[RMDB]
RNA sequence: GGGAACGACUCGAGUAGAGUCGAAAAAUAAAGCACGGCAAGCACAUGAAGCACAUGAAGCAGUACAAGCACAUGAAGCAGUACAAGCACUACAAGCAGUAGAAGCAGCCGAAGCACAUGUAAAAAAGGAUAUAACUGAGUUCGCUCAGUUAUAUCCAAAAGAAACAACAACAACAAC
Reactivity to 2A3 in 0.01 (KOAc 150mM, MgCl2 10mM, bicine 150mM(pH8.5), 24C), signal-to-noise 2, nucleotides 027 to 126: a000u160a040a050a000g010c020a000c060g040g010c030a030a070g050c020a030c010a080u060g050a140a000g060c060a010c010a110u080g030a100a020g000c030a010g000u040a030c030a090a000g030c000a010c010a060u060g060a130a000g010c020a000g000u040a020c000a010a080g000c020a010c050u050a030c030a120a050g070c040a010g040u030a000g020a120a000g020c000a010g000c020c020g000a020a000g020c010a000c010a070u080g010u180a050a030a010a010a070a040
Reactivity to DMS in 0.01 (KOAc 150mM, MgCl2 10mM, bicine 150mM(pH8.5), 24C), signal-to-noise 3, nucleotides 027 to 126: a050u000a040a080a070g010c060a090c110g000g000c040a080a070g020c040a060c050a080u000g000a120a060g010c050a040c050a060u000g000a060a030g010c010a020g020u000a060c100a050a100g000c040a060c060a060u000g000a050a070g010c010a050g010u000a000c070a050a120g010c020a080c050u040a000c120a080a070g000c080a040g040u000a040g000a070a100g000c040a070g000c030c030g000a060a080g000c050a030c050a040u000g010u010a000a090a050a070a010a090